Structure probing data (2A3 and DMS) for a 177-nucleotide construct. For DMS the reverse transcriptase was MarathonRT. The 2A3 profile rests on 4,974 reads. Reactivities are given for positions 27 through 126. The RNA was probed in 150 mM KOAc, 10 mM MgCl2 and 150 mM bicine (pH 8.5) at 24 C.
[RMDB]
RNA sequence: GGGAACGACUCGAGUAGAGUCGAAAAAGAGUUCGCUUCGGCGAACUCUACAACGGGAAAACGGCCUCGCGGAAAGAUAAGGCGGAUUCCGUCCAAGCGCCGAGAGUGGUGCGUUCGCGCACCACAAGAGAACAAAUAGGUUCGCCUAUUUGUUCUCAAAAGAAACAACAACAACAAC
Reactivity to 2A3 in 0.01 (KOAc 150mM, MgCl2 10mM, bicine 150mM(pH8.5), 24C), signal-to-noise 3, nucleotides 027 to 126: a030g020a000g000u000u010c000g010c030u030u070c170g020g010c010g000a000a000c000u010c000u000a000c000a050a020c020g050g000g080a020a130a010a050c010g070g000c010c000u020c030g020c020g040g070a050a090a080g080a120u160a140a050g070g000c070g070g000a110u080u060c000c000g020u010c040c010a080a020g060c060g030c120c010g030a030g020a010g060u020g010g000u000g010c020g010u020u030c230g020c000g000c020a000c000c020a000c000a000a010
Reactivity to DMS in 0.01 (KOAc 150mM, MgCl2 10mM, bicine 150mM(pH8.5), 24C), signal-to-noise 4, nucleotides 027 to 126: a050g000a020g000u010u000c000g020c000u000u000c180g010g030c000g010a000a000c000u010c000u000a020c100a080a060c070g000g020g010a080a050a090a160c060g010g000c030c010u000c130g000c050g000g000a040a050a150g000a120u010a050a080g000g020c040g010g000a230u000u000c000c000g010u000c070c110a100a130g010c180g030c020c020g010a120g000a160g010u000g000g020u010g010c000g020u000u000c190g000c010g010c000a020c010c000a000c000a040a080